[RMDB]
RNA sequence: GGGAACGACUCGAGUAGAGUCGAAAAGGUUGUCACUUACAGUGCAGCUACUAAGUGAGAAACAGUGUAUGAAGGGUUCAUUAUACUUCUUUGAGCAUGUGAUUUAAGGAUCUAUGUACUAAGACUGUAUAUUAAGGGUUUUCGAACCCUUAAUAUAAAAAGAAACAACAACAACAAC
Reactivity to DMS in 0.01 (KOAc 150mM, MgCl2 10mM, bicine 150mM(pH8.5), 24C), signal-to-noise 9, nucleotides 027 to 126: g010g010u000u000g010u010c030a040c030u000u010a070c150a090g020u000g010c070a070g010c050u000a100c130u010a040a060g010u000g000a070g010a130a060a070c040a050g010u000g010u000a070u000g000a060a070g010g010g010u000u000c110a070u000u000a070u000a060c030u000u000c020u000u000u000g010a260g020c010a020u000g000u010g000a030u000u000u010a110a100g010g000a030u000c010u000a030u000g000u000a080c070u000a040a060g000a060c150u000g010
Reactivity to 2A3 in 0.01 (KOAc 150mM, MgCl2 10mM, bicine 150mM(pH8.5), 24C), signal-to-noise 5, nucleotides 027 to 126: g100g000u050u030g070u150c020a010c020u050u190a060c040a060g010u020g060c040a010g040c020u020a030c030u050a080a100g050u030g070a070g060a040a090a010c030a020g020u000g020u080a050u110g070a060a020g130g010g000u050u040c020a040u080u240a040u040a100c010u100u100c030u050u050u070g020a050g010c020a020u070g040u060g260a070u060u040u130a100a070g100g000a000u000c010u010a030u080g020u020a070c050u030a040a010g050a060c020u050g020
Description:
Structure probing data (DMS and 2A3) for a 177-nucleotide construct. The DMS profile rests on 26,137 reads. The reactions ran in a buffer of 150 mM KOAc, 10 mM MgCl2 and 150 mM bicine (pH 8.5), at 24 C. High 2A3 reactivity points to a flexible backbone, as in loops and unpaired stretches. For 2A3, 4,254 sequencing reads were counted. Reactivities are given for positions 27 through 126.